RNA sequence: GGGAACGACUCGAGUAGAGUCGAAAAAUAACAGGUUGAGUUAUCUCAACACAAAGUAAUAACCGUUAAGGGUGUAGCCUAUGAUCAACACAAAUAUGAAAUAUUGGUCCUGGAUGGGCGCGUUUUCAAUACUUUUGUAUUUCGAUACAAAAGUAUUAAAAGAAACAACAACAACAAC
Reactivity to DMS in 0.01 (KOAc 150mM, MgCl2 10mM, bicine 150mM(pH8.5), 24C), signal-to-noise 9, nucleotides 027 to 126: a070u010a080a070c120a100g010g010u000u000g000a030g010u010u040a130u020c010u000c010a020a020c020a060c090a080a090a100g000u010a070a070u010a100a110c010c010g010u010u030a120a120g010g010g020u000g010u010a110g010c010c020u000a040u010g000a040u010c040a020a040c150a100c160a060a070a060u030a080u040g000a070a090a160u020a090u000u000g010g010u010c030c250u010g010g000a070u010g010g000g010c020g010c100g000u010u000u000u000c090
Reactivity to 2A3 in 0.01 (KOAc 150mM, MgCl2 10mM, bicine 150mM(pH8.5), 24C), signal-to-noise 9, nucleotides 027 to 126: a000u110a030a020c040a030g060g000u010u000g010a010g010u160u250a140u180c030u000c010a010a030c060a010c010a070a130a010g070u080a030a100u070a110a040c020c030g060u120u150a090a070g110g000g020u060g050u060a020g000c000c010u040a060u100g030a050u050c020a030a070c020a020c040a120a130a040u270a080u190g140a100a070a020u180a050u080u060g000g000u030c000c050u080g120g050a060u060g030g000g000c020g010c040g020u050u010u010u040c030